[RMDB]
RNA sequence: GGGAACGACUCGAGUAGAGUCGAAAACAGAGGAUAAUGAAAGUGGAAUUCACUCAGUGUUCAAUGAAUGUGGUCUCCAAAACGCUUUUUAAAAAGAGUCCAAUUCAUCAUCACAUUGAUAGGAACAUCUAAUCCAUGACUUCGGUCAUGGAUUAGAAAAAGAAACAACAACAACAAC
Reactivity to 2A3 in 0.01 (KOAc 150mM, MgCl2 10mM, bicine 150mM(pH8.5), 24C), signal-to-noise 2, nucleotides 027 to 126: c020a020g100a070g120g090a040u030a130a100u200g130a060a100a000g020u090g050g130a160a160u090u060c030a030c020u000c000a000g010u000g020u110u130c090a010a000u060g020a000a020u220g100u060g270g020u020c020u000c010c010a000a000a110a170c090g080c060u290u090u100u130u300a120a020a000a000a000g000a000g000u040c000c000a020a000u020u000c010a050u040c010a020u040c010a020c020a060u030u050g040a020u090a170g120g000a020a020c030a020
Reactivity to DMS in 0.01 (KOAc 150mM, MgCl2 10mM, bicine 150mM(pH8.5), 24C), signal-to-noise 1, nucleotides 027 to 126: c090a110g000a110g020g010a090u010a050a060u000g000a050a150a070g020u000g010g000a200a110u000u010c030a030c130u000c000a050g010u010g000u000u020c200a110a000u000g000a020a030u030g010u000g040g020u000c020u000c040c070a040a050a100a080c300g020c120u030u000u000u000u000a110a020a050a140a010g010a060g010u000c010c010a000a060u000u000c000a020u000c140a170u000c060a050c030a020u000u000g010a010u010a130g020g010a040a080c290a080
This 177-nucleotide RNA was probed chemically with 2A3 and DMS.
Values cover nucleotides 27 to 126.
The data come from the RNA Mapping Database (RMDB), library RFMREP.